An RNA of 177 nucleotides, treated with 2A3 and DMS and read out base by base. The 2A3 profile rests on 64,079 reads. The data come from the RNA Mapping Database (RMDB), library OK1LIB.
RNA sequence: GGGAACGACUCGAGUAGAGUCGAAAACGAGGCCUCUAUAUUGCAAGUAGAUCUGGUCCUAAACGGCCUCAAGCCAUGCGGUACGGAGCUUCGAUUGAGGAUGUGCAUGAAUACUGGACAUUGGCGGAUAUGUAAUUCCGUUCGCGGGAUUGCAUAUAAAAGAAACAACAACAACAAC
Reactivity to 2A3 in 0.01 (KOAc 150mM, MgCl2 10mM, bicine 150mM(pH8.5), 24C), signal-to-noise 9, nucleotides 027 to 126: c060g000a010g010g000c020c000u030c030u020a040u020a030u080u250g100c080a130a050g020u020a010g020a040u010c030u040g010g000u010c000c000u020a030a040a010c050g000g000c000c000u010c010a000a000g000c000c000a040u040g010c010g010g000u010a020c020g040g020a040g010c000u030u020c020g130a150u030u160g040a040g040g020a020u040g020u030g030c020a030u060g030a070a020u060a060c030u040g020g020a010c010a030u020u040g010g000c000g010g010
Reactivity to DMS in 0.01 (KOAc 150mM, MgCl2 10mM, bicine 150mM(pH8.5), 24C), signal-to-noise 9, nucleotides 027 to 126: c110g000a030g000g010c020c010u000c040u000a060u010a070u020u040g020c190a090a120g010u010a030g000a070u020c070u010g000g010u000c010c020u000a040a090a120c200g010g000c010c010u000c050a100a110g010c030c020a060u010g010c050g000g010u010a040c080g000g000a140g000c020u000u000c030g010a110u020u010g000a090g000g010a040u010g000u000g000c060a060u020g000a090a080u020a050c080u000g000g010a070c050a060u010u010g000g010c050g000g000